[RMDB]
RNA sequence: GGGAACGACUCGAGUAGAGUCGAAAAGAAAGGCCUGUAGCCAGCUGCAAAACACACCUGUUUUUCCACCCAAACGUUUGGCAGCAGAGGUGCCCAUUCAAGAGGUCUGCCGAGAAAAGCCUCUACACUGUAGUAUUUACACACAGCUUUGCUAUGACCCUAAUACUACCUUCGGGUAGUAUUAGGGAAAAGAAACAACAACAACAAC
Reactivity to DMS in 0.01 (KOAc 150mM, MgCl2 10mM, bicine 150mM(pH8.5), 24C), signal-to-noise 1, nucleotides 027 to 156: g000a150a110a110g000g030c070c050u000g070u000a090g020c030c060a100g050c000u060g000c000a040a060a060a070c020a050c020a090c040c000u000g000u000u010u010u010u010c010c000a150c040c030c050a090a080a120c070g010u000u020u000g040g000c100a040g010c030a110g010a030g100g020u010g050c020c030c000a170u000u000c040a030a090g020a070g060g030u000c020u000g050c010c040g010a220g030a070a030a070a160g010c080c010u000c000u010a070c110a070c020u000g010u000a070g040u000a180u020u000u000a040c050a090c080a020c030a050g000c050u000u000u010g000c040u000a100u010g000a300
Reactivity to 2A3 in 0.01 (KOAc 150mM, MgCl2 10mM, bicine 150mM(pH8.5), 24C), signal-to-noise 2, nucleotides 027 to 156: g040a060a020a000g020g010c060c040u100g070u150a000g060c030c040a020g010c030u030g000c030a070a000a090a020c040a000c000a050c020c050u030g110u040u010u020u050u040c060c020a070c030c040c010a110a090a020c100g030u060u120u110g040g000c010a000g050c020a000g020a020g040g010u030g010c010c000c000a040u100u100c060a070a000g080a030g050g000u070c050u050g020c020c050g050a080g100a120a090a020a020g020c000c010u040c010u020a030c070a030c050u040g030u000a050g050u000a260u060u300u240a040c080a000c010a000c000a040g000c000u130u050u080g010c020u070a030u300g050a060